Structure probing data (DMS) for a 177-nucleotide construct.
Reactivities are given for positions 27 through 126.
The data come from the RNA Mapping Database (RMDB), library OK2TRN.
[RMDB]
RNA sequence: GGGAACGACUCGAGUAGAGUCGAAAAAGAGCAGCCAGUGGGCCGUGCUGCGCCGCGACCACGCGCAGAUCAUCGCCGAUGACACGGCGGUGGCCGACGCCUUUACCAAGCACUGCUACAUGGAGUGUGUUAACAGGACGUUCGCGUCCUGUUAACAAAAAGAAACAACAACAACAAC
Reactivity to DMS in 0.01 (KOAc 150mM, MgCl2 10mM, bicine 150mM(pH8.5), 24C), signal-to-noise 3, nucleotides 027 to 126: a040g010a140g000c040a080g010c030c040a110g020u000g010g000g030c000c050g010u000g020c010u000g040c060g000c060c010g000c060g010a180c030c040a080c170g000c050g020c080a080g010a130u000c010a010u000c020g010c070c050g000a050u000g000a150c140a170c020g000g010c010g000g020u000g000g010c050c000g010a060c090g000c030c130u000u010u000a090c130c190a110a090g020c050a050c010u000g000c030u000a080c150a070u010g000g020a100g020u000g010

DMS adducts were read by reverse transcription with MarathonRT. The DMS profile rests on 1,788 reads.